[RMDB]
RNA sequence: GGGAACGACUCGAGUAGAGUCGAAAAGAUAUGGACGGACGAACGCGCUACCCACCAUACAGAUCGGAAACGAUCUAGUAUGAGGCUAAGCGUCCGUCCUAAGUCAAAACCCUCCUUCGGGAGGGAAUCCCUUUAUUUUGUUCGCAAAAUAAAGGGAAAAAGAAACAACAACAACAAC
Reactivity to DMS in 0.01 (KOAc 150mM, MgCl2 10mM, bicine 150mM(pH8.5), 24C), signal-to-noise 5, nucleotides 027 to 126: g010a040u000a270u020g010g000a030c020g010g010a010c010g000a060a070c170g010c110g020c070u000a070c090c030c080a300c090c000a010u000a000c000a010g000a010u000c000g000g010a080a060a110c000g000a000u000c010u000a070g010u000a000u000g000a120g030g000c030u010a120a210g000c010g000u000c000c010g000u000c000c000u000a000a080g000u000c030a080a040a110a150c000c000c000u000c000c000u000u010c190g030g000g010a000g000g020g000a020a020
Reactivity to 2A3 in 0.01 (KOAc 150mM, MgCl2 10mM, bicine 150mM(pH8.5), 24C), signal-to-noise 3, nucleotides 027 to 126: g020a020u040a020u090g000g000a000c000g010g000a000c020g030a130a080c090g140c000g040c130u100a170c050c050c030a060c030c000a000u000a000c000a010g000a000u000c000g000g000a030a020a020c000g000a000u000c000u000a050g000u000a000u010g020a070g200g000c040u060a080a060g070c000g020u000c010c000g000u000c010c000u000a000a010g010u010c010a040a080a110a270c010c000c010u000c000c010u040u110c300g130g000g000a010g000g000g000a000a010
This 177-nucleotide RNA was probed chemically with DMS and 2A3. It was measured as part of the RMDB library TTRDEL. DMS (dimethyl sulfate) methylates the pairing face of unpaired adenines and cytosines. Reactivities are given for positions 27 through 126.